The data come from the RNA Mapping Database (RMDB), library M2PK50. An RNA of 177 nucleotides, treated with DMS and 2A3 and read out base by base. For 2A3, 1,850 sequencing reads were counted.
RNA sequence: GGGAACGACUCGAGUAGAGUCGAAAAGACAAGUGCUUCGGCACUUGUCAAAUAAGCAAGUAGAAAUGCCCAAACUACAUGCAUCGAAAGAAAGGCCAUAAAAAACUGUCCAGUUCGCUGGACAGAACAUUGGGUAUGUCUUCGGACAUACCCAAUGAAAAGAAACAACAACAACAAC
Reactivity to DMS in 0.01 (KOAc 150mM, MgCl2 10mM, bicine 150mM(pH8.5), 24C), signal-to-noise 2, nucleotides 027 to 126: g000a020c010a030a020g020u000g020c010u000u020c260g040g050c000a000c000u000u010g030u000c000a010a090a040u000a110a200g030c010a020a070g000u000a000g010a020a020a060u010g000c030c030c020a090a110a060c040u000a020c020a060u010g010c050a110u010c140g000a070a040a120g000a020a090a050g000g030c010c090a030u020a010a100a060a020a070a110c010u000g000u000c000c000a010g000u000u000c230g010c000u000g000g000a010c000a000g000a060a090
Reactivity to 2A3 in 0.01 (KOAc 150mM, MgCl2 10mM, bicine 150mM(pH8.5), 24C), signal-to-noise 2, nucleotides 027 to 126: g000a000c000a010a010g000u020g020c020u040u130c220g060g000c010a020c000u010u010g000u000c010a000a000a000u010a010a010g010c000a070a000g010u030a010g080a240a190a030u120g040c000c000c040a050a020a010c020u020a010c010a020u030g000c010a060u070c090g120a150a070a110g070a050a070a030g120g020c050c080a050u270a060a210a010a040a010a040c000u020g000u000c000c010a000g000u030u040c150g040c070u010g000g000a000c000a000g010a010a000
For DMS, 1,271 sequencing reads were counted. The RNA was probed in 150 mM KOAc, 10 mM MgCl2 and 150 mM bicine (pH 8.5) at 24 C.